[RMDB]
RNA sequence: GGGAACGACUCGAGUAGAGUCGAAAAUUUUGAGAAAUCAUAAGUCUUUGAGUUCUGGGGGGAGUAUAGUUGCAAGGCUGAAACUUAAAGGAAUUGACGGAAGGGCACCACCAGGAGUGGAGCUUGCCAAAUAUGUGGAAUUCGUUCCACAUAUUUGAAAAGAAACAACAACAACAAC
Reactivity to 2A3 in 0.01 (KOAc 150mM, MgCl2 10mM, bicine 150mM(pH8.5), 24C), signal-to-noise 9, nucleotides 027 to 126: u080u050u040u090g080a070g030a030a070a040u080c050a060u060a200a060g090u040c030u060u090u100g060a070g020u050u050c030u070g010g000g000g020g020g000a010g020u060a070u050a130g050u040u050g040c040a050a040g040g000c010u040g040a080a020a020c030u050u080a090a030a030g050g010a060a070u060u080g030a030c040g010g040a020a020g030g010g010c020a010c020c000a000c020c010a060g050g050a060g030u030g010g010a020g020c010u020u030g020c020
Reactivity to DMS in 0.01 (KOAc 150mM, MgCl2 10mM, bicine 150mM(pH8.5), 24C), signal-to-noise 9, nucleotides 027 to 126: u010u010u010u010g000a070g000a110a080a090u000c030a040u010a070a080g010u010c030u000u010u000g010a080g010u000u000c030u010g010g000g010g010g000g000a060g020u020a070u020a050g010u000u010g010c090a060a060g000g000c040u000g010a080a070a060c070u010u010a050a070a080g000g010a060a070u010u010g010a080c070g010g000a070a070g000g000g000c040a070c040c020a060c030c030a130g010g010a120g040u000g000g010a070g010c030u000u000g000c210